RNA sequence: GGGAACGACUCGAGUAGAGUCGAAAAGAUAUGGAUUUACCUCGCUAGCUAUAGUUCGGAAACGAACUAUUAGCUUGGACCGAGCGUAAAUCCUAAGUCAAAAUCCUGACUGUUCGCAGUCAGGAAACGAGCUUACAUACUUCGGUAUGUAAGCUCGAAAAGAAACAACAACAACAAC
Reactivity to 2A3 in 0.01 (KOAc 150mM, MgCl2 10mM, bicine 150mM(pH8.5), 24C), signal-to-noise 1, nucleotides 027 to 126: g060a010u070a060u120g000g000a000u010u020u000a000c020c000u000c000g080c140u200a090g000c000u000a000u000a000g050u000u030c000g110g000a110a040a040c020g020a010a060c030u000a010u020u190a000g030c000u020u050g070g090a120c120c070g010a030g000c170g000u020a000a000a000u000c000c000u010a090a010g000u000c070a000a030a070a290u030c000c000u000g000a000c000u010g160u080u170c300g090c150a020g030u020c080a020g010g070a020a020a000
Reactivity to DMS in 0.01 (KOAc 150mM, MgCl2 10mM, bicine 150mM(pH8.5), 24C), signal-to-noise 1, nucleotides 027 to 126: g010a010u000a300u010g000g000a000u000u000u000a010c010c000u000c000g000c060u000a050g000c000u000a030u000a010g000u010u030c010g040g010a080a080a130c000g010a030a030c000u000a000u000u000a000g000c000u000u000g020g050a140c300c020g000a010g000c210g000u000a020a000a000u000c000c000u010a030a100g000u000c040a080a180a240a110u010c000c000u030g030a060c000u010g000u010u020c250g000c000a020g010u000c000a000g000g000a010a030a050
The record gives the reactivity of an RNA of 177 nucleotides to 2A3 and DMS. It was measured as part of the RMDB library TTRDES. 2A3 adducts were read by reverse transcription with SuperScript II with manganese. Reactivities are given for positions 27 through 126. Conditions: 150 mM KOAc, 10 mM MgCl2 and 150 mM bicine (pH 8.5), 24 C.